Source information: The data come from the RNA Mapping Database (RMDB), library M2PK50. An RNA of 177 nucleotides, treated with DMS and 2A3 and read out base by base. For 2A3, 7,356 sequencing reads were counted. For DMS, 4,031 sequencing reads were counted.
RNA sequence: GGGAACGACUCGAGUAGAGUCGAAAACUUCCAGCGUUCGCGCUGGAAGAAAGGCCGAGUAGUGUUGGGUCGCGAAUGGCCAUAAAUCAACAAUCACUCAGAAAAUCGGUAUCUUCGGAUACCGAAACCUUCAUAAACUGUUCGCAGUUUAUGAAGGAAAAGAAACAACAACAACAAC
Reactivity to DMS in 0.01 (KOAc 150mM, MgCl2 10mM, bicine 150mM(pH8.5), 24C), signal-to-noise 4, nucleotides 027 to 126: c000u010u000c000c000a010g000c000g030u000u010c200g050c010g030c000u000g000g010a010a000g000a020a070a110g010g020c040c020g000a020g010u010a080g010u000g020u000u000g010g030g020u000c010g010c080g030a100a110u020g020g000c000c020a130u000a050a100a120u030c030a030a040c040a070a100u010c100a040c030u000c030a110g000a090a060a100a090u000c000g000g010u010a010u000c000u000u010c170g010g000a020u000a000c000c010g000a000a020a050
Reactivity to 2A3 in 0.01 (KOAc 150mM, MgCl2 10mM, bicine 150mM(pH8.5), 24C), signal-to-noise 5, nucleotides 027 to 126: c010u000u000c000c000a010g000c000g050u080u080c180g000c010g000c080u010g000g000a000a000g000a010a020a000g050g020c040c020g000a000g020u060a010g000u020g050u100u090g100g040g030u100c010g000c030g160a200a130u200g010g000c000c000a010u090a010a080a030u110c020a010a060c010a050a080u140c030a010c050u040c030a030g150a120a090a010a120u030c010g000g000u000a000u000c000u020u050c220g110g000a010u000a000c000c000g000a000a000a000